[RMDB]
RNA sequence: GGGAACGACUCGAGUAGAGUCGAAAACUGCCAUUCCAAGCUGUGUGUCCUGUCAGUGUGGACAUGGCGGGCUUGGCAGGGCAAGUCUAGGUUGGAGGGUGAAUAGCCUGUGGACCCAGAUGCCCUGUGUGAACCAGUGCUUCGGCACUGGUUCACAAAAAGAAACAACAACAACAAC
Reactivity to 2A3 in 0.01 (KOAc 150mM, MgCl2 10mM, bicine 150mM(pH8.5), 24C), signal-to-noise 2, nucleotides 027 to 126: c110u090g040c040c000a030u080u000c000c000a000a040g010c000u020g050u060g010u000g070u000c000c000u160g090u180c090a090g120u100g070u150g300g000a010c000a020u000g060g000c080g000g000g000c000u000u000g000g000c000a000g000g070g000c090a100a000g170u060c000u040a000g020g000u030u030g210g110a250g050g000g000u260g120a210a000u300a130g090c070c000u060g140u260g110g000a000c060c000c000a060g000a030u120g000c010c000c000u000g000